[RMDB]
RNA sequence: GGGAACGACUCGAGUAGAGUCGAAAAAUCAUUUGUGAUGCAGAGGUUACUGACAUUGCCUCUAUCAACCGGAUAACCCUGCUAAUGUCUGAUUUUGCAUUGUCUAUAGAUGGACCACUUUAUUUGGCUCCCUCCAGUACUUCGGUACUGGAGGGAGAAAAGAAACAACAACAACAAC
Reactivity to 2A3 in 0.01 (KOAc 150mM, MgCl2 10mM, bicine 150mM(pH8.5), 24C), signal-to-noise 3, nucleotides 027 to 126: a000u020c030a000u000u030u280g040u030g090a060u140g060c060a000g040a030g100g030u040u000a000c050u070g040a030c010a040u070u060g120c030c040u220c020u040a070u040c030a000a110c190c000g060g000a010u030a010a030c000c000c000u000g000c000u020a020a000u060g010u000c000u060g040a040u080u130u080u010g030c050a070u140u000g080u060c090u170a090u030a120g060a040u100g120g040a000c000c010a050c070u240u210u160a150u060u180u070g020g000
Notes:
An RNA of 177 nucleotides, treated with 2A3 and read out base by base. For 2A3 the reverse transcriptase was SuperScript II with manganese. The RNA was probed in 150 mM KOAc, 10 mM MgCl2 and 150 mM bicine (pH 8.5) at 24 C. Values cover nucleotides 27 to 126.